RNA sequence: GGGAACGACUCGAGUAGAGUCGAAAAGGUAUACUUGGAUAUGUAGUCAAACAACUUCUUAAAGUUGAUGGCUUUCUUCUCCUCGGGAAGGGUCAAACUCUCCUUAAUUGCGUCACUCAUAUCCUCAGAACUCCAUGGGUUAACAAUGAUAGCACCGGUGAAGCGCUUAAUUCGUUAAGCGCUUCACAAAAGAAACAACAACAACAAC
Reactivity to 2A3 in 0.01 (KOAc 150mM, MgCl2 10mM, bicine 150mM(pH8.5), 24C), signal-to-noise 1, nucleotides 027 to 156: g000g030u050a030u140a180c060u100u100g020g020a050u030a040u080g080u140a020g050u040c060a110a060a170c000a060a060c060u090u150c080u220u300a230a180a000g030u050u000g030a030u000g000g110c000u100u000u000c000u120u000c030u020c020c030u080c180g030g000g000a060a060g060g000g000u150c080a000a140a300c080u020c000u160c000c000u080u130a190a150u300u060g030c000g140u000c000a000c050u030c000a030u030a090u130c050c000u020c030a010g030a020a020c000u000c000c090a030u210g000g100g000u210u130a090a000c050a140a070u300g000a000u240a060g000c050a020c300c000g000

This 207-nucleotide RNA was probed chemically with 2A3.
2A3 adducts were read by reverse transcription with SuperScript II with manganese.
It was measured as part of the RMDB library OK3TST.
The RNA was probed in 150 mM KOAc, 10 mM MgCl2 and 150 mM bicine (pH 8.5) at 24 C.
Values cover nucleotides 27 to 156.